Chemical mapping of a 177-nucleotide RNA with DMS and 2A3. For 2A3 the reverse transcriptase was SuperScript II with manganese. The data come from the RNA Mapping Database (RMDB), library OK2TST. For DMS, 1,734 sequencing reads were counted.
RNA sequence: GGGAACGACUCGAGUAGAGUCGAAAAGAGGUGCGCACUGUUCAUGGGGCACGCAGUGAUGCCGAUGAGCAGGGCAACUGCGUCUGCGAUUACAAAUUCAAUAAAAAGACAUCCGUGCGCCUGCUGAGUAUUACCCAGGGUUCGCCCUGGGUAAUACAAAAGAAACAACAACAACAAC
Reactivity to DMS in 0.01 (KOAc 150mM, MgCl2 10mM, bicine 150mM(pH8.5), 24C), signal-to-noise 2, nucleotides 027 to 126: g040a080g000g000u000g010c050g000c030a040c050u000g000u000u000c060a070u010g010g000g020g000c080a060c050g000c040a030g000u000g000a140u000g000c000c000g020a130u000g000a060g000c060a070g000g010g000c010a130a050c060u010g020c070g010u020c100u000g010c060g000a090u000u000a140c160a070a110a080u010u020c090a050a130u010a040a070a080a150a040g010a120c050a100u010c070c100g030u000g000c020g030c000c010u000g000c050u000g000a190
Reactivity to 2A3 in 0.01 (KOAc 150mM, MgCl2 10mM, bicine 150mM(pH8.5), 24C), signal-to-noise 1, nucleotides 027 to 126: g050a010g050g000u140g000c010g040c000a020c040u020g040u080u020c110a120u110g000g000g240g000c010a000c000g000c010a010g020u140g090a220u050g000c000c010g030a110u130g070a040g030c050a050g000g060g000c000a000a000c010u010g010c020g040u050c040u020g030c000g020a070u060u100a050c060a050a120a050u120u120c060a030a110u130a170a120a020a000a010g030a000c020a060u020c040c030g000u020g000c000g010c000c000u040g010c000u000g030a020